[RMDB]
RNA sequence: GGGAACGACUCGAGUAGAGUCGAAAAGGGGUCAUCCCGAAAUCAAGAUGGUCAGAGCUUGGAUUUACUAGGCUGAAGCCUCCACGGCCUAGUUGUCAGCUCUACAUCUUGGCUUGGGAUGACGGAGGCACCCAAAACAUACAGUUCGCUGUAUGAACCAAUCCAGGCGGUUCGCCGCCUGGAUUGGAAAAGAAACAACAACAACAAC
Reactivity to 2A3 in 0.01 (KOAc 150mM, MgCl2 10mM, bicine 150mM(pH8.5), 24C), signal-to-noise 1, nucleotides 027 to 156: g160g030g000g020u000c000a000u010c000c010c020g030a080a070a010u080c010a010a010g000a000u010g020g160u300c210a010g010a000g000c060u160u200g090g020a060u300u300u060a010c000u000a010g010g010c010u010g010a110a040g060c010c030u050c020c020a050c000g040g000c000c000u000a000g020u000u030g000u010c010a000g000c000u000c000u030a010c000a000u000c010u000u000g000g010c020u040u080g000g000g000a010u010g000a000c010g000g000a000g010g020c040a070c050c000c000a010a050a060a050c020a020u020a010c000a000g060u080u090c170g100c170u000g000u000a000u010g010a020a070